[RMDB]
Conditions: 150 mM KOAc, 10 mM MgCl2 and 150 mM bicine (pH 8.5), 24 C. Chemical mapping of a 207-nucleotide RNA with 2A3 and DMS. Reactivities are given for positions 27 through 156. It was measured as part of the RMDB library OK3TST. The 2A3 profile rests on 1,569 reads. 2A3 is a SHAPE reagent: it acylates the 2'-hydroxyl of flexible nucleotides of all four kinds.
RNA sequence: GGGAACGACUCGAGUAGAGUCGAAAAGGGUCGGUAGGGUCAUUGUAAUACUGUGCUCUAAACUGAACACGGUCCAAGUACUGGCCACGCUUCUUGGCAAGGAUUUGUACAUCAAAGCCAAAGAACUUACCGUCUUUACGAAGUUGACGAGGCCAGAGUGGCCUCAUUAGUUCGCUAAUGAGGCCACAAAAGAAACAACAACAACAAC
Reactivity to 2A3 in 0.01 (KOAc 150mM, MgCl2 10mM, bicine 150mM(pH8.5), 24C), signal-to-noise 4, nucleotides 027 to 156: g070g010g020u060c040g040g030u040a030g050g060g000u040c020a050u060u140g080u190a140a040u090a150c030u030g030u030g050c030u010c000u060a210a280a100c150u130g040a030a030c020a010c020g030g000u030c050c030a030a010g080u050a120c020u020g020g020c000c000a010c040g020c090u020u010c000u020u020g020g000c040a140a130g110g010a030u120u090u180g100u210a080c030a100u060c030a020a120a070g000c010c000a060a140a000g020a000a000c040u080u130a090c080c010g030u000c040u050u110u050a120c120g080a150a050g060u180u110g050a040c010g010a030g030g000c010c000a010g000a020
Reactivity to DMS in 0.01 (KOAc 150mM, MgCl2 10mM, bicine 150mM(pH8.5), 24C), signal-to-noise 3, nucleotides 027 to 156: g000g000g010u000c030g010g020u000a030g000g020g010u000c090a130u000u000g020u000a100a140u010a050c030u000g000u000g010c020u000c020u010a090a110a120c190u000g010a000a020c010a000c000g060g020u080c120c060a040a190g030u000a150c000u000g030g020c000c000a120c110g020c060u000u000c040u000u000g020g020c000a050a190g010g010a100u000u000u000g040u000a040c180a110u000c080a050a090a210g010c060c000a060a110a100g010a060a040c000u020u000a080c040c040g010u010c040u000u000u000a070c020g000a040a070g010u010u000g020a060c020g010a170g000g020c020c010a050g000a300